RNA sequence: GGGAACGACUCGAGUAGAGUCGAAAACUCUACGAAAUCGUUGGGCCCUACUGGACAAGCCUUUGGCCAGAAUCCACUUUCAGGGGGUGGAGGGUAGCAUAGGGUAUCACCCAAUUGCCACUCCUUUAGGUAGUAUGAAGUUCGCUUCAUACUACCUAAAAGAAACAACAACAACAAC
Reactivity to 2A3 in 0.01 (KOAc 150mM, MgCl2 10mM, bicine 150mM(pH8.5), 24C), signal-to-noise 1, nucleotides 027 to 126: c010u000c000u010a010c000g040a030a040a070u060c040g000u010u020g010g050g000c000c000c010u010a050c030u010g000g020a010c020a070a080g160c050c140u130u070u040g020g000c000c010a000g000a000a050u040c020c010a020c040u030u130u180c120a050g040g000g020g000g000u040g000g020a040g020g010g000u040a040g040c000a030u060a030g030g000g010u070a080u220c050a050c000c000c050a030a110u130u030g050c010c000a020c030u000c010c000u000u000u000
Reactivity to DMS in 0.01 (KOAc 150mM, MgCl2 10mM, bicine 150mM(pH8.5), 24C), signal-to-noise 2, nucleotides 027 to 126: c000u000c020u000a040c000g020a110a110a040u000c030g010u020u000g050g010g020c000c000c020u030a110c010u000g000g000a040c030a010a030g000c140c240u020u000u000g010g000c000c000a020g000a120a170u000c000c000a010c030u000u050u020c150a070g000g000g010g020g030u000g020g020a060g010g020g040u000a100g000c000a060u000a170g000g000g000u000a140u030c230a170c000c000c010a060a060u040u020g020c000c010a020c030u000c000c050u000u000u010